[RMDB]
RNA sequence: GGGAACGACUCGAGUAGAGUCGAAAACAGGAAGCAGCAGAGCCUGGAAGUAUACCCACAUCAUCUGAUGCUGAAGGCCCUGUCUCAACAGGGAAGUGGCUCCCUUAUGUACAUGGUGGUUACUGUGUUCAAGUGUUCAUUGCAGGUGCUGAGUAACCCGAUACAGGAUGUUCGCAUCCUGUAUCGGAAAAGAAACAACAACAACAAC
Reactivity to 2A3 in 0.01 (KOAc 150mM, MgCl2 10mM, bicine 150mM(pH8.5), 24C), signal-to-noise 1, nucleotides 027 to 156: c030a010g000g090a060a000g060c040a000g000c030a010g050a010g070c000c020u020g000g010a060a030g070u140a060u120a210c020c060c050a070c070a050u100c000a010u010c040u090g000a030u050g010c030u030g040a090a050g090g020c000c000c000u030g040u000c110u040c100a010a190c020a020g000g000g020a000a000g020u080g010g030c000u040c000c030c000u060u260a120u180g050u010a050c010a020u070g050g010u000g000g030u040u060a060c060u040g020u020g070u130u110c050a090a030g050u000g020u080u120c050a110u050u130g020c040a000g010g050u030g000c000u040g030a040g080u040a040a050c010
Reactivity to DMS in 0.01 (KOAc 150mM, MgCl2 10mM, bicine 150mM(pH8.5), 24C), signal-to-noise 1, nucleotides 027 to 156: c010a060g000g020a070a110g070c060a080g030c010a080g020a190g000c100c000u000g010g010a030a110g020u000a060u000a080c030c000c070a120c050a120u010c050a190u000c150u000g030a070u010g010c070u000g010a170a210g010g000c020c000c010u000g000u000c180u000c150a100a050c090a070g000g000g000a020a090g000u000g050g000c030u000c030c030c030u000u020a040u010g030u000a060c070a060u000g000g060u010g070g060u010u000a020c040u010g000u000g020u000u010c020a050a130g030u000g020u000u000c080a100u000u000g020c010a030g000g000u010g050c010u010g020a130g010u000a090a100c130